This 177-nucleotide RNA was probed chemically with 2A3 and DMS. The RNA was probed in 150 mM KOAc, 10 mM MgCl2 and 150 mM bicine (pH 8.5) at 24 C. It was measured as part of the RMDB library OK2TST. For 2A3, 2,197 sequencing reads were counted.
[RMDB]
RNA sequence: GGGAACGACUCGAGUAGAGUCGAAAAUGCUGGAGUCAGGGCAAAUGCUCAGCAGCCGAAGUUGUUUGUUGGCAUGAUCCUCAUCCUCAUCUUCGCAGAGGCGCUCGCUCUGUAUGGCCUCAUUGUCCUGUGGAGUUUUAUUCGUAAAACUCCACAGAAAAGAAACAACAACAACAAC
Reactivity to 2A3 in 0.01 (KOAc 150mM, MgCl2 10mM, bicine 150mM(pH8.5), 24C), signal-to-noise 2, nucleotides 027 to 126: u040g010c020u020g060g040a050g010u080c030a020g040g010g000c030a010a170a050u100g010c010u020c110a020g020c020a000g000c020c050g080a140a060g000u060u060g020u070u120u080g020u020u030g020g010c040a020u050g020a070u070c010c000u010c010a020u040c000c010u020c010a060u020c020u060u050c030g000c020a000g030a020g080g030c050g000c010u030c040g000c000u060c010u070g060u080a090u100g050g010c020c020u020c020a070u060u110g050u060c020
Reactivity to DMS in 0.01 (KOAc 150mM, MgCl2 10mM, bicine 150mM(pH8.5), 24C), signal-to-noise 3, nucleotides 027 to 126: u000g000c060u000g010g010a170g010u000c070a050g010g010g000c100a080a120a080u010g010c030u000c060a040g020c040a050g020c020c030g020a050a110g000u010u000g010u000u010u010g020u000u000g010g000c060a090u000g010a110u010c030c010u000c060a090u000c020c020u010c040a040u000c040u010u000c070g000c050a120g000a100g000g020c070g010c060u000c090g010c030u000c010u000g010u000a060u010g020g020c010c010u010c040a080u000u010g020u010c100

For DMS, 3,432 sequencing reads were counted. High DMS reactivity at an A or C suggests that its Watson-Crick edge is free.